[RMDB]
RNA sequence: GGGAACGACUCGAGUAGAGUCGAAAAGUAAUAGAUAACUGGAUGCAGCGUAGGCGUCAACGCAUAUCCAGUACGAAUGGUACCUGUAAAUAAAAUAUGGCGCCUAGUACAAGUACCAACAGAAGGAUAAGCGAUGUUGAUGUCAAUCAAAUUUGCAUGGAUGGUAUGGAUUCGUCCAUACCAUCCAAAAAGAAACAACAACAACAAC
Reactivity to DMS in 0.01 (KOAc 150mM, MgCl2 10mM, bicine 150mM(pH8.5), 24C), signal-to-noise 1, nucleotides 027 to 156: g000u020a060a140u000a110g010a070u000a110a090c000u000g020g000a040u000g060c130a070g000c000g150u000a080g000g030c000g010u000c010a090a020c010g070c020a140u010a100u000c000c020a090g040u000a080c040g060a130a100u010g060g040u010a040c000c000u000g070u000a050a090a290u000a030a130a160a140u000a090u000g020g010c060g000c030c010u000a050g000u000a010c010a020a040g000u000a010c000c000a030a160c130a090g010a170a080g010g000a080u000a120a150g000c060g040a140u010g010u000u010g010a080u000g030u000c020a060a120u010c060a000a000a180u000u000u000g020c050a090